Conditions: 150 mM KOAc, 10 mM MgCl2 and 150 mM bicine (pH 8.5), 24 C. The record gives the reactivity of an RNA of 177 nucleotides to DMS and 2A3. Reactivities are given for positions 27 through 126. For DMS, 2,716 sequencing reads were counted.
[RMDB]
RNA sequence: GGGAACGACUCGAGUAGAGUCGAAAAUUUUGGGCCCUUCCAUAUCAUGCCCUUAUAGAGAGGAUAGUAAUGCACCUCUUUCCAGCAAAAAGUCAUCACUACACCCUGCUUUAUCCUAUAACGGGAAUAGUACCAUAGCAUUCGUGCUAUGGUACUAAAAAGAAACAACAACAACAAC
Reactivity to DMS in 0.01 (KOAc 150mM, MgCl2 10mM, bicine 150mM(pH8.5), 24C), signal-to-noise 3, nucleotides 027 to 126: u000u000u000u010g010g010g030c030c030c050u000u010c010c010a050u010a020u010c010a110u020g000c020c010c020u010u000a110u010a110g000a070g010a040g000g000a130u000a040g020u000a050a030u010g010c210a070c040c010u000c020u010u000u000c040c100a140g010c110a030a020a060a070a050g010u000c030a010u000c050a040c060u000a040c060a080c040c020c050u000g010c060u000u000u000a090u000c020c020u000a080u030a080a120c170g000g000g010a070a170
Reactivity to 2A3 in 0.01 (KOAc 150mM, MgCl2 10mM, bicine 150mM(pH8.5), 24C), signal-to-noise 2, nucleotides 027 to 126: u050u030u030u060g040g020g010c000c000c000u040u010c010c010a030u010a010u060c050a050u110g060c030c000c000u030u050a200u170a040g070a020g000a000g010g030a100u060a050g080u100a100a040u070g030c040a030c020c010u030c000u000u020u000c020c020a030g050c060a020a040a000a070a050g040u040c020a010u020c000a040c010u060a040c040a040c020c000c010u020g060c020u070u080u060a070u010c000c010u110a120u060a230a040c040g030g020g010a010a010